[RMDB]
RNA sequence: GGGAACGACUCGAGUAGAGUCGAAAAGUGUCUCUGACUCUCACACUCUCUCUCUGAGUCACUCUCAGUCUCAGAGAGAGAGAGACUCAGACACAGUGUGAGUGUCUCUGACUCACUGAGACAGUCAGAUUGAGCUGACGUUCGCGUCAGCUCAAUCAAAAGAAACAACAACAACAAC
Reactivity to 2A3 in 0.01 (KOAc 150mM, MgCl2 10mM, bicine 150mM(pH8.5), 24C), signal-to-noise 1, nucleotides 027 to 126: g060u020g060u000c010u000c010u110g030a030c040u040c000u020c060a010c000a020c060u030c000u000c000u000c000u030c010u030g000a000g010u030c070a070c030u070c010u060c080a050g070u050c010u000c010a030g020a000g010a000g000a000g000a000g000a000g000a030c010u010c060a010g040a020c040a010c010a040g060u090g040u010g080a050g030u030g030u080c020u000c030u110g040a050c010u000c060a090c090u080g000a030g010a050c050a050g160u030c030a050
Reactivity to DMS in 0.01 (KOAc 150mM, MgCl2 10mM, bicine 150mM(pH8.5), 24C), signal-to-noise 1, nucleotides 027 to 126: g000u000g000u000c030u000c030u000g000a030c100u010c000u000c070a070c140a140c090u000c020u000c030u020c040u000c020u010g010a000g000u000c050a130c160u000c140u000c180a110g000u000c000u000c060a050g000a090g010a010g000a000g020a000g020a030g000a030c050u000c060a000g000a040c030a020c060a170g000u030g030u000g010a020g020u000g010u000c010u000c020u010g000a070c070u000c090a100c060u000g010a030g020a090c160a070g000u010c060a030

This 177-nucleotide RNA was probed chemically with 2A3 and DMS.
The DMS profile rests on 1,046 reads.
It was measured as part of the RMDB library OK2TRN.
Conditions: 150 mM KOAc, 10 mM MgCl2 and 150 mM bicine (pH 8.5), 24 C.
For 2A3, 1,442 sequencing reads were counted.